The data come from the RNA Mapping Database (RMDB), library M2RFPK. An RNA of 207 nucleotides, treated with 2A3 and read out base by base. Reactivities are given for positions 27 through 156. For 2A3, 1,554 sequencing reads were counted. The reactions ran in a buffer of 150 mM KOAc, 10 mM MgCl2 and 150 mM bicine (pH 8.5), at 24 C.

RNA sequence: GGGAACGACUCGAGUAGAGUCGAAAACAGGAAACUGGUUAAUCGUUUUCCUUGGUAGUAUAGCGGAAACCAUAAAUAAGAAGAACUCUAAGUGCUUGCGUAGAGUUAAAAUAAUUAGACAGGCAAUUAAGGUACUCCACGUUCGCGUGGAGUACAACGUUAGACUUGGGUUCGCCCAAGUCUAACGAAAAGAAACAACAACAACAAC
Reactivity to 2A3 in 0.01 (KOAc 150mM, MgCl2 10mM, bicine 150mM(pH8.5), 24C), signal-to-noise 3, nucleotides 027 to 156: c020a010g010g110a050a020a070c070u180g000g070u110u110a130a140u100c010g010u020u030u050u070c010c000u020u040g070g000u020a070g010u020a060u120a110g030c060g030g040a030a070a040c020c010a040u090a150a110a030u120a140a050g100a090a010g020a080a010c000u010c000u000a000a000g010u040g260c000u000u010g000c000g010u000a000g000a010g020u110u120a000a000a000a000u090a000a010u240u000a000g010a000c000a000g000g000c010a000a010u170u120a090a030g070g000u000a000c000u020c010c010a010c010g020u070u060c160g000c000g060u000g010g000a000g000u000a000c000a000a000